[RMDB]
RNA sequence: GGGAACGACUCGAGUAGAGUCGAAAAGCACGUCCGGGAAGUCCCGUGCGAACACUUGAGCUCCGGCUUGGCCGCUCUUGUGGAUUAGGACGUUCUAGCUCCGGCUUGGCCGCUAGUUCGUCCGAAACAGUGAGUAGUAUUUCGAUACUACUCACUGAAAAGAAACAACAACAACAAC
Reactivity to 2A3 in 0.01 (KOAc 150mM, MgCl2 10mM, bicine 150mM(pH8.5), 24C), signal-to-noise 9, nucleotides 027 to 126: g050c020a010c050g030u040c050c010g020g010g040a140a060g180u160c010c010c000g010u030g010c010g020a070a010c010a000c010u010u020g010a000g010c020u050c080c040g170g000c110u180u230g160g020c020c010g000c010u000c000u010u020g010u020g020g020a050u070u190a060g000g000a000c000g000u000u000c000u000a020g000c030u070c110c040g160g010c130u150u270g140g010c040c020g000c010u000a000g000u000u000c000g000u000c000c000g000a010a010a000
Reactivity to DMS in 0.01 (KOAc 150mM, MgCl2 10mM, bicine 150mM(pH8.5), 24C), signal-to-noise 7, nucleotides 027 to 126: g010c060a080c060g000u030c110c040g010g020g010a240a130g000u020c020c010c010g000u000g010c030g010a150a120c020a020c020u000u000g000a020g010c040u020c210c010g000g000c090u040u030g000g000c050c170g000c010u000c000u000u000g000u000g000g000a130u020u010a090g000g010a010c000g020u000u000c000u000a010g000c020u020c090c030g010g000c080u050u020g000g020c080c090g000c010u000a010g010u000u000c010g020u000c000c000g010a050a070a180